[RMDB]
RNA sequence: GGGAACGACUCGAGUAGAGUCGAAAAGGAUCCUAUGUACUCUUGGUAACUGCCUGUAGAUCAGUUACCAGUGAGGAGUACACUAUGUGUCAAUGAUCUACAGGUUGACAUAUAGAGAAUAGGAUCGCUACUGCUAUCUAUUCGUAGAUAGCAGUAGAAAAGAAACAACAACAACAAC
Reactivity to 2A3 in 0.01 (KOAc 150mM, MgCl2 10mM, bicine 150mM(pH8.5), 24C), signal-to-noise 8, nucleotides 027 to 126: g030g000a000u000c000c000u020a030u040g040u020a050c010u010c040u080u050g030g000u040a040a030c000u010g010c010c020u100g090u090a030g020a170u050c000a010g010u010u010a000c000c000a000g010u030g080a080g040g030a010g020u030a010c020a010c010u020a020u050g050u000g000u000c010a000a020u030g030a150u040c020u100a060c030a050g110g000u000u010g000a000c000a010u040a000u010a020g050a000g050a030a020u020a020g000g000a000u000c000g000
Reactivity to DMS in 0.01 (KOAc 150mM, MgCl2 10mM, bicine 150mM(pH8.5), 24C), signal-to-noise 9, nucleotides 027 to 126: g000g000a010u000c000c000u000a020u000g020u000a030c000u000c000u000u010g010g010u000a020a040c010u000g010c210c070u000g020u010a080g010a110u000c000a010g010u000u000a010c000c010a020g010u010g030a120g010g000a040g010u000a020c010a220c000u000a020u000g010u000g000u000c020a020a020u000g010a080u010c110u000a060c140a060g010g010u000u000g000a020c010a030u000a020u000a000g000a120g010a270a090u000a010g010g000a010u000c000g010